[RMDB]
RNA sequence: GGGAACGACUCGAGUAGAGUCGAAAAGAUAUGGAUCUACCAGUUCUUUUGACGAAGUGUCGGAAACGACCUUCGAUAAGAACGUAGAUCCUAAGUCAAAAGCUCAACACCUUCGGGUGUUGAGCAAUCCAUCUAUACAGUUCGCUGUAUAGAUGGAAAAAGAAACAACAACAACAAC
Reactivity to DMS in 0.01 (KOAc 150mM, MgCl2 10mM, bicine 150mM(pH8.5), 24C), signal-to-noise 8, nucleotides 027 to 126: g000a020u000a170u010g000g000a000u000c000u000a000c090c300a100g000u000u000c000u000u000u000u010g010a290c090g000a020a010g010u020g020u000c000g010g000a030a020a070c000g000a010c000c000u000u000c000g000a040u010a010a020g000a010a010c000g000u000a010g000a000u000c000c000u000a000a060g000u000c020a110a090a120a150g000c000u000c000a000a010c000a000c000c000u000u010c160g020g010g020u000g000u000u000g000a000g010c000a010a020
Reactivity to 2A3 in 0.01 (KOAc 150mM, MgCl2 10mM, bicine 150mM(pH8.5), 24C), signal-to-noise 2, nucleotides 027 to 126: g010a000u030a010u060g000g000a010u000c010u020a030c090c190a160g020u010u000c020u040u220u240u150g080a040c010g010a000a010g060u070g000u300c000g010g000a030a020a020c010g000a000c010c000u000u000c000g010a030u050a120a080g000a000a000c010g000u010a000g000a000u010c000c000u000a020a000g010u010c020a040a050a120a110g000c000u010c010a000a000c000a000c000c000u040u140c300g180g000g000u010g000u000u000g000a000g000c000a000a000
Source: RMDB library TTRDEL, as collected in RNAgym. The record gives the reactivity of an RNA of 177 nucleotides to DMS and 2A3. 2A3 adducts were read by reverse transcription with SuperScript II with manganese. For 2A3, 30,959 sequencing reads were counted. The reactions ran in a buffer of 150 mM KOAc, 10 mM MgCl2 and 150 mM bicine (pH 8.5), at 24 C.